[RMDB]
Notes
The data come from the RNA Mapping Database (RMDB), library 15KLIB. The record gives the reactivity of an RNA of 170 nucleotides to DMS and 2A3. For DMS the reverse transcriptase was MarathonRT. For 2A3, 156,298 sequencing reads were counted.
RNA sequence: GGGAACGACUCGAGUAGAGUCGAAAACCAAGAGUGGCGUUAAUGACAUUUGUAUGUUUGAGAAUAAAACCACUUUGCCUACUAAUAUAGCUUUUGAACUCUAUGCUAAGCGUGCUGUACGCUCGCAACCCCAUCUUGUUCGCAAGAUGGAAAAGAAACAACAACAACAAC
Reactivity to DMS in 0.01 (KOAc 150mM, MgCl2 10mM, bicine 150mM(pH8.5), 24C), signal-to-noise 9, nucleotides 027 to 129: c030c020a140a060g040a000g030u030g000g000c160g010u050u050a020a010u050g000a000c070a010u020u090u080g060u080a020u030g030u000u010u000g060a130g010a120a050u050a050a080a100a070c010c010a020c060u010u010u020g040c050c020u020a100c120u050a100a110u040a060u040a090g010c070u040u040u020u020g030a050a060c050u010c070u020a050u060g040c070u010a070a080g000c000g000u040g020c080u030g030u000a070c100g000c030u000c130g040c050a020a060c120c030
Reactivity to 2A3 in 0.01 (KOAc 150mM, MgCl2 10mM, bicine 150mM(pH8.5), 24C), signal-to-noise 9, nucleotides 027 to 129: c000c000a010a000g070a000g010u020g010g010c060g040u070u140a090a060u160g030a020c020a030u120u200u240g290u210a110u050g070u020u060u090g130a100g060a090a060u150a120a080a020a010c000c000a010c000u040u020u050g050c010c020u090a130c030u070a140a150u190a090u050a140g030c020u090u110u060u160g070a060a050c020u020c050u120a080u150g030c020u050a080a040g000c010g040u030g010c030u080g130u170a030c080g000c020u020c000g000c010a030a050c010c000